[RMDB]
RNA sequence: GGGAACGACUCGAGUAGAGUCGAAAAUCAGUACGAUCAUGGAUCGGUACGAUGAUCCUAGUGGAUCGUAGUACGCUCUCGCGAUCUGCAGGUACCGGAUCUAUGAGUCUAGGGUACCGAGGUACGCAAUAUCGCAGAACUUCGGUUCUGCGAUAUUAAAAGAAACAACAACAACAAC
Reactivity to 2A3 in 0.01 (KOAc 150mM, MgCl2 10mM, bicine 150mM(pH8.5), 24C), signal-to-noise 2, nucleotides 027 to 126: u070c020a020g070u040a010c030g010a040u030c050a130u160g030g010a000u000c030g060g050u050a020c040g050a060u130g010a000u020c000c010u070a080g170u150g180g000a000u000c010g000u010a000g040u010a050c050g040c040u020c020u030c030g000c010g020a030u000c020u000g030c040a100g010g090u030a010c030c000g000g030a030u000c060u100a220u300g070a080g140u030c030u090a100g270g010g000u000a000c010c000g000a020g010g020u050a070c040g000c030
Reactivity to DMS in 0.01 (KOAc 150mM, MgCl2 10mM, bicine 150mM(pH8.5), 24C), signal-to-noise 3, nucleotides 027 to 126: u020c110a180g010u010a050c050g010a030u000c010a150u010g020g010a010u000c000g020g020u020a070c130g010a090u010g000a030u010c010c000u000a150g020u010g000g000a010u000c000g020u000a080g010u000a110c120g000c080u000c050u000c090g010c030g010a080u000c010u000g030c040a110g010g000u000a010c010c010g000g000a020u000c020u000a100u010g010a150g010u000c030u010a110g050g010g020u000a020c000c010g000a070g020g020u000a080c080g010c070